[RMDB]
RNA sequence: GGGAACGACUCGAGUAGAGUCGAAAAAUCUCCGACUGACCAGCAGCUGCUUCACGAGUUUGAUAUCUACGAUGCUCCAGCUCAUCAGCGGAUGAAUCAGAUCUCCGAGCAACUUGGACAGCUUGGACCUCGUUUUACUAUUCGUAGUAAAACGAGGAAAAGAAACAACAACAACAAC
Reactivity to DMS in 0.01 (KOAc 150mM, MgCl2 10mM, bicine 150mM(pH8.5), 24C), signal-to-noise 4, nucleotides 027 to 126: a090u000c030u000c000c010g000a140c030u000g000a060c060c120a060g030c210a050g020c040u000g000c040u000u010c060a100c160g000a040g000u000u010u010g010a060u000a070u010c000u000a130c100g000a060u000g010c060u010c100c060a060g010c050u000c030a090u000c020a080g040c050g000g000a050u010g000a080a050u000c040a030g000a100u000c040u000c000c050g000a030g000c010a040a060c080u000u000g010g000a110c090a060g010c050u000u010g030g010a110
Reactivity to 2A3 in 0.01 (KOAc 150mM, MgCl2 10mM, bicine 150mM(pH8.5), 24C), signal-to-noise 4, nucleotides 027 to 126: a000u020c030u020c020c000g150a190c010u010g020a020c000c070a030g100c020a010g010c040u040g010c010u120u090c060a050c160g000a030g010u030u130u050g120a090u090a070u100c030u080a040c090g030a040u030g020c030u030c040c030a040g000c030u010c030a040u000c000a010g070c020g060g020a030u110g060a020a040u050c010a020g030a130u060c010u000c040c000g000a000g000c030a030a100c040u090u150g040g030a050c030a020g050c040u020u030g000g010a010
The record gives the reactivity of an RNA of 177 nucleotides to DMS and 2A3. Reactivities are given for positions 27 through 126. It was measured as part of the RMDB library OK2TRN. For DMS, 3,832 sequencing reads were counted. The RNA was probed in 150 mM KOAc, 10 mM MgCl2 and 150 mM bicine (pH 8.5) at 24 C.